[RMDB]
Overview
Chemical mapping of a 177-nucleotide RNA with DMS and 2A3. High DMS reactivity at an A or C suggests that its Watson-Crick edge is free. Conditions: 150 mM KOAc, 10 mM MgCl2 and 150 mM bicine (pH 8.5), 24 C. For 2A3, 838 sequencing reads were counted. It was measured as part of the RMDB library OK2TST.
RNA sequence: GGGAACGACUCGAGUAGAGUCGAAAAAAGGAGUACACAUGGAGGGACCCAUGGCUCCAGCUGCAUAUGUAGCAGAGGAUGACCUUGUUGGACAUCAAUGCUAUGAAAGAACCUUGGUCCUGUGAAACAUGGACCUCCGAUUCGUCGGAGGUCCAUGAAAAGAAACAACAACAACAAC
Reactivity to DMS in 0.01 (KOAc 150mM, MgCl2 10mM, bicine 150mM(pH8.5), 24C), signal-to-noise 2, nucleotides 027 to 126: a060a110g000g000a030g040u000a140c200a280c030a040u000g000g010a110g050g020g000a050c050c000c000a010u000g000g010c000u000c000c000a120g030c080u000g010c210a090u010a100u000g020u010a000g030c000a000g040a300g030g000a000u000g010a130c010c000u000u040g000u000u020g020g020a130c010a020u000c000a060a150u000g000c020u000a010u010g020a090a070a030g000a070a170c060c050u000u000g020g000u000c010c000u020g030u010g030a140a080a180
Reactivity to 2A3 in 0.01 (KOAc 150mM, MgCl2 10mM, bicine 150mM(pH8.5), 24C), signal-to-noise 1, nucleotides 027 to 126: a000a000g000g000a000g000u120a050c110a000c020a170u020g030g040a200g090g040g000a010c010c000c000a020u020g010g000c000u000c000c000a010g000c080u190g010c030a070u140a050u300g000u040a000g000c000a000g020a050g300g000a000u000g020a020c010c050u120u210g300u290u300g100g010a020c010a000u000c000a000a080u010g000c010u020a000u010g080a020a030a040g040a020a000c010c030u050u110g040g010u040c000c030u090g080u080g150a060a080a000